Chemical mapping of a 177-nucleotide RNA with 2A3 and DMS. The data come from the RNA Mapping Database (RMDB), library TTRDEL. For 2A3, 2,330 sequencing reads were counted. For DMS the reverse transcriptase was MarathonRT. Conditions: 150 mM KOAc, 10 mM MgCl2 and 150 mM bicine (pH 8.5), 24 C. For 2A3 the reverse transcriptase was SuperScript II with manganese.

[RMDB]
RNA sequence: GGGAACGACUCGAGUAGAGUCGAAAAGAUAUGGACCAGCUUGAGGCUGCGACUACCCACCUCGGAAACGAGAGGUCGAACUACAGCUGCUGGUCCUAAGUCAAACACUGCUCUUCGGAGCAGUGAAGAUUCCUAAGAGCUUCGGCUCUUAGGAAUCAAAAGAAACAACAACAACAAC
Reactivity to 2A3 in 0.01 (KOAc 150mM, MgCl2 10mM, bicine 150mM(pH8.5), 24C), signal-to-noise 2, nucleotides 027 to 126: g030a000u040a030u040g000g000a000c000c000a030g040c060u220u300g300a100g250g000c020u030g030c030g000a040c020u130a090c050c030c040a120c080c000u020c000g000g040a050a060a050c030g020a010g020a020g060g000u010c020g040a100a060c120u260a090c300a000g020c000u240g000c000u000g010g000u000c000c000u010a000a000g000u010c010a020a020a000c010a010c000u000g000c000u000c020u000u140c300g070g000a000g000c000a000g000u000g000a010a020
Reactivity to DMS in 0.01 (KOAc 150mM, MgCl2 10mM, bicine 150mM(pH8.5), 24C), signal-to-noise 2, nucleotides 027 to 126: g030a060u010a300u000g000g010a030c010c000a010g000c010u000u020g010a150g020g000c010u000g000c020g000a040c000u000a120c040c080c060a300c180c000u000c000g000g000a080a020a150c000g000a040g000a050g000g000u000c010g000a100a070c170u000a260c010a030g000c000u000g030c000u010g010g000u010c010c000u000a010a080g000u010c080a080a160a160c000a010c000u000g000c000u000c000u000u010c230g020g000a000g000c000a000g030u000g010a030a080